Chemical mapping of a 177-nucleotide RNA with 2A3 and DMS.
2A3 adducts were read by reverse transcription with SuperScript II with manganese.
Source: RMDB library 15KREP, as collected in RNAgym.
2A3 is a SHAPE reagent: it acylates the 2'-hydroxyl of flexible nucleotides of all four kinds.
The reactions ran in a buffer of 150 mM KOAc, 10 mM MgCl2 and 150 mM bicine (pH 8.5), at 24 C.
DMS adducts were read by reverse transcription with MarathonRT.

RNA sequence: GGGAACGACUCGAGUAGAGUCGAAAAGCGGAGACCCCGGUCCGAAUGCCCGUCGGCAGCAAACUCCUCUGGAGUCCUUCGGAUCCAAAGGAGAAAACUACCGGCGGAGGGUGAUCCACUCGGAGUUCUCUUACUAAUAGUUCGCUAUUAGUAAGAGAAAAGAAACAACAACAACAAC
Reactivity to 2A3 in 0.01 (KOAc 150mM, MgCl2 10mM, bicine 150mM(pH8.5), 24C), signal-to-noise 2, nucleotides 027 to 126: g060c050g020g020a060g000a120c000c010c000c020g040g090u000c030c000g060a110a080u080g060c000c000c000g000u000c010g010g000c000a000g000c000a040a060a100c000u000c000c000u000c010u010g070g030a090g210u120c020c000u300u200c170g010g000a010u010c000c000a020a020a000g010g000a000g030a090a140a000a000c000u020a000c000c000g000g020c020g020g000a020g040g000g000u040g020a090u010c010c030a020c000u020c040g070g050a070g030u070u010
Reactivity to DMS in 0.01 (KOAc 150mM, MgCl2 10mM, bicine 150mM(pH8.5), 24C), signal-to-noise 1, nucleotides 027 to 126: g000c100g000g000a080g000a230c260c000c000c060g020g000u020c060c010g000a060a100u010g000c200c020c020g050u040c020g010g000c030a020g020c010a030a130a250c000u000c000c010u000c000u010g000g000a050g000u000c020c020u040u010c260g040g020a170u000c000c000a000a050a010g000g000a020g000a020a030a130a170c010u000a020c040c000g020g010c020g000g000a030g020g000g000u000g010a120u000c070c000a080c020u000c040g000g010a110g030u000u000